[RMDB]
RNA sequence: GGGAACGACUCGAGUAGAGUCGAAAACUGUUGUCCCGGAGGAAGUGGCUGGAAAGCGAACUGCGCGAAGCGGGUCCGGCCGGCGCUGGCCGGCACCCGCAACUCGGCGCCCAGAGGCACUAAGCGCCCUAUGAUUGGAUUUCGAUCCAAUCAUAGGAAAAGAAACAACAACAACAAC
Reactivity to DMS in 0.01 (KOAc 150mM, MgCl2 10mM, bicine 150mM(pH8.5), 24C), signal-to-noise 4, nucleotides 027 to 126: c090u010g010u010u000g010u010c020c030c010g000g000a080g010g010a070a040g010u010g000g010c010u000g000g020a080a100a100g000c030g000a080a080c100u030g000c030g010c030g000a080a170g020c000g030g000g020u010c010c010g000g010c010c000g010g010c100g020c120u010g000g020c000c040g020g010c120a000c010c000c010g020c000a010a020c080u000c050g010g010c040g010c010c040c050a100g000a140g000g000c040a060c110u020a100a080g000c030g020c030
Reactivity to 2A3 in 0.01 (KOAc 150mM, MgCl2 10mM, bicine 150mM(pH8.5), 24C), signal-to-noise 1, nucleotides 027 to 126: c060u090g070u110u040g020u050c000c000c000g030g030a070g010g020a110a020g020u030g080g030c020u020g010g060a120a040a020g060c080g040a050a070c030u090g000c050g000c010g090a070a000g000c010g000g000g010u000c000c010g000g000c010c000g010g000c030g000c050u060g000g010c000c000g000g020c010a010c000c000c010g000c000a000a010c020u010c010g040g000c010g020c000c000c010a050g010a080g040g030c020a020c080u050a060a020g000c000g000c030